RNA sequence: GGGAACGACUCGAGUAGAGUCGAAAAGGGAGAUGCUAGGAGUCAGGGGAAGCCAGAACGACUGAGAAAGAAAAGAGAGCAACGGGGCUAGCUGCCGGGUGUUCCAUCCAUGGGAUCGGUGCCGAGUAGACAGUGGGGUUCGCCCCACUGAAAAGAAACAACAACAACAAC
Reactivity to 2A3 in 0.01 (KOAc 150mM, MgCl2 10mM, bicine 150mM(pH8.5), 24C), signal-to-noise 4, nucleotides 027 to 129: g040g000g000a050g000a030u020g080c040u020a030g060g010a050g030u070c080a070g010g000g000g020a040a020g030c030c010a030g020a090a020c050g040a010c070u060g010a020g000a120a050a010g040a000a040a020a010g040a000g020a010g000c020a030a070c030g000g000g030g060c020u030a020g020c000u010g030c010c000g000g000g030u040g040u090u010c040c010a010u030c040c010a090u160g070g000g010a020u040c050g010g050u030g010c000c020g010a010g040u040a030g000a010
Reactivity to DMS in 0.01 (KOAc 150mM, MgCl2 10mM, bicine 150mM(pH8.5), 24C), signal-to-noise 2, nucleotides 027 to 129: g000g000g000a060g040a060u040g010c090u040a100g020g010a070g020u040c010a100g060g030g010g010a120a100g000c110c040a090g040a100a100c100g030a020c030u040g010a120g030a060a030a030g020a040a020a110a100g040a050g010a000g000c080a000a080c130g000g000g000g000c000u000a000g000c090u010g040c000c040g000g010g020u040g050u010u000c050c040a110u000c070c120a050u000g030g020g010a040u000c050g040g000u040g000c030c030g020a060g030u020a000g000a130